[RMDB]
RNA sequence: GGGAACGACUCGAGUAGAGUCGAAAACACUCACGAUUCGUCGUGAGUGAAAGAACGCCAAAGUGACGCAAUCUUCCGCGUCAGGAAGGCGAAUCGAGGUAAAAACCGGGUCCUUCGGGACCCGGAACGAGUUAGUACUCUUCGGAGUACUAACUCGAAAAGAAACAACAACAACAAC
Reactivity to DMS in 0.01 (KOAc 150mM, MgCl2 10mM, bicine 150mM(pH8.5), 24C), signal-to-noise 2, nucleotides 027 to 126: c020a010c000u000c000a010c000g000a050u000u000c160g030u010c010g010u000g000a010g010u000g000a020a030a100g000a100a220c020g030c000c000a030a080a300g010u000g000a010c000g040c000a110a080u010c100u010u000c300c130g000c010g000u000c000a030g000g030a270a280g000g010c010g010a060a050u020c030g020a110g000g000u000a050a000a050a170a070c040c030g000g010g020u000c000c000u000u030c160g030g010g000a020c020c030c000g000g000a000a050
Reactivity to 2A3 in 0.01 (KOAc 150mM, MgCl2 10mM, bicine 150mM(pH8.5), 24C), signal-to-noise 2, nucleotides 027 to 126: c020a000c000u020c030a000c000g020a030u060u050c170g020u000c000g000u100g000a000g000u000g000a000a000a000g010a080a000c000g000c000c000a090a050a000g100u020g000a000c000g010c000a020a150u110c150u210u070c170c080g000c020g000u000c000a000g040g040a010a040g030g000c040g010a000a020u090c020g040a030g020g150u160a150a080a020a050a050c010c000g030g000g010u000c010c000u070u050c140g030g000g030a000c020c000c010g000g000a010a010